[RMDB]
Structure probing data (DMS and 2A3) for a 207-nucleotide construct. Conditions: 150 mM KOAc, 10 mM MgCl2 and 150 mM bicine (pH 8.5), 24 C.
RNA sequence: GGGAACGACUCGAGUAGAGUCGAAAAUCGAAAUCAUCAGGAGUGAUCCAGAUGACGGUCCUGCCAUGAGACCGCAACGAGAGCAUGUCGCAUCGAAUGGACUCGGGGAGUCGGCAGCUUGCCCCACUAAGGCAGACGUUGUUCGCAACGUCUGCAAGAUGCCUCUAAUGUUCGCAUUAGAGGCAUCAAAAGAAACAACAACAACAAC
Reactivity to DMS in 0.01 (KOAc 150mM, MgCl2 10mM, bicine 150mM(pH8.5), 24C), signal-to-noise 1, nucleotides 027 to 156: u010c040g000a060a120a040u000c040a020u000c020a120g020g010a190g000u010g000a180u000c000c020a210g010a040u000g010a080c030g000g020u000c010c010u000g090c030c120a140u010g040a130g040a080c000c070g040c050a050a110c090g000a210g000a160g030c000a220u000g000u000c030g000c060a050u000c040g000a140a190u010g010g000a120c110u020c070g000g000g050g000a090g000u000c030g020g000c000a110g010c040u010u000g000c000c000c040c030a110c100u000a070a080g000g040c000a020g000a020c000g040u000u000g010u010u000c210g050c000a000a030c040g010u000c000u010g000c000a000a000
Reactivity to 2A3 in 0.01 (KOAc 150mM, MgCl2 10mM, bicine 150mM(pH8.5), 24C), signal-to-noise 4, nucleotides 027 to 156: u070c020g020a030a010a030u030c010a010u010c010a020g000g030a020g030u080g040a090u030c000c010a010g020a010u010g020a020c010g010g020u000c010c010u040g120c060c030a140u140g020a070g000a080c000c030g000c080a030a060c030g040a020g000a000g080c060a090u120g040u100c050g010c050a050u050c030g050a050a060u090g040g060a050c050u020c090g010g000g020g010a040g050u090c010g030g010c010a030g020c040u040u120g030c000c000c010c000a030c050u130a070a090g120g000c000a000g000a000c010g000u000u000g030u080u070c110g010c150a000a000c000g000u000c000u000g000c000a000a000